Notes: Structure probing data (2A3 and DMS) for a 207-nucleotide construct. The RNA was probed in 150 mM KOAc, 10 mM MgCl2 and 150 mM bicine (pH 8.5) at 24 C. DMS adducts were read by reverse transcription with MarathonRT. The 2A3 profile rests on 2,825 reads. It was measured as part of the RMDB library M2RFPK. The DMS profile rests on 1,620 reads.
RNA sequence: GGGAACGACUCGAGUAGAGUCGAAAAAAUUGAUACAAGGUGUGGAGCGACCUUAAACAGUUCUGGUGGUGCUCUGAAUGGAGUGCUCUACUGAGAUUAUAAAAUAGAAGGUAAGCUAUUAUCUCUUAAAACGCAAUAGAGUUCGCUCUAUUGCGAAGAUUAACCCUUAGUUCGCUAAGGGUUAAUCAAAAGAAACAACAACAACAAC
Reactivity to 2A3 in 0.01 (KOAc 150mM, MgCl2 10mM, bicine 150mM(pH8.5), 24C), signal-to-noise 3, nucleotides 027 to 156: a000a000u180u120g040a040u060a030c050a040a010g000g000u000g000u040g050g000a000g000c020g020a010c010c010u090u130a080a060a020c030a050g020u040u020c010u030g030g010u030g000g000u010g000c000u000c010u070g140a100a090u270g010g010a000g020u010g000c020u000c020u080a060c080u050g010a000g010a090u070u060a060u160a130a080a030a010u060a030g040a050a010g070g010u110a050a000g030c020u020a030u130u030a040u040c030u010c020u020u030a130a080a020a020c000g000c000a000a000u000a000g000a000g000u030u050c110g030c060u000c000u000a000u000u000g000c000g000a010a000
Reactivity to DMS in 0.01 (KOAc 150mM, MgCl2 10mM, bicine 150mM(pH8.5), 24C), signal-to-noise 1, nucleotides 027 to 156: a100a080u000u000g030a150u000a100c050a050a070g010g030u020g020u000g020g000a070g030c030g010a140c020c010u000u010a060a090a170c060a090g000u010u000c040u010g030g030u000g000g000u000g020c040u000c000u010g000a140a140u000g020g000a110g040u010g020c000u000c030u000a040c020u000g010a080g000a130u010u010a150u010a080a040a090a140u000a100g000a090a030g010g000u000a060a070g020c030u000a050u000u010a060u000c000u050c000u000u000a030a030a140a170c000g010c000a010a010u000a030g000a020g010u020u010c300g020c000u000c000u000a000u020u000g020c060g010a000a020